[RMDB]
RNA sequence: GGGAACGACUCGAGUAGAGUCGAAAAGGGAAAAAUACGACAACUUUGUUGAGCUCUUUGACAACUUUGAAAACAUUCUGAUGUUUGAAGAGCAAGAAGAAGUUUUCGAGGUUCCGACGAACGGAUUCGUCUACAUUCUCAGAGACAUUUCAAAAAAGUGUUAACGUCUUUUCGAAGACGUUAACACAAAAGAAACAACAACAACAAC
Reactivity to 2A3 in 0.01 (KOAc 150mM, MgCl2 10mM, bicine 150mM(pH8.5), 24C), signal-to-noise 3, nucleotides 027 to 156: g040g010g040a070a070a000a010a020u160a110c030g020a010c040a050a020c020u100u030u050g060u050u070g050a030g000c010u000c000u020u010u030g030a030c010a060a030c050u060u080u150g040a100a080a020a030c020a190u080u050c010u030g060a070u030g080u050u070u150g030a060a030g030a010g010c020a030a000g030a030a000g020a010a000g000u030u000u000u010c010g000a020g000g040u000u060c050c020g010a030c020g020a090a010c070g070g130a150u080u020c000g000u000c000u010a040c020a070u060u040c010u000c030a010g000a000g010a040c040a080u040u110u090c140a150a050a020a050a050a030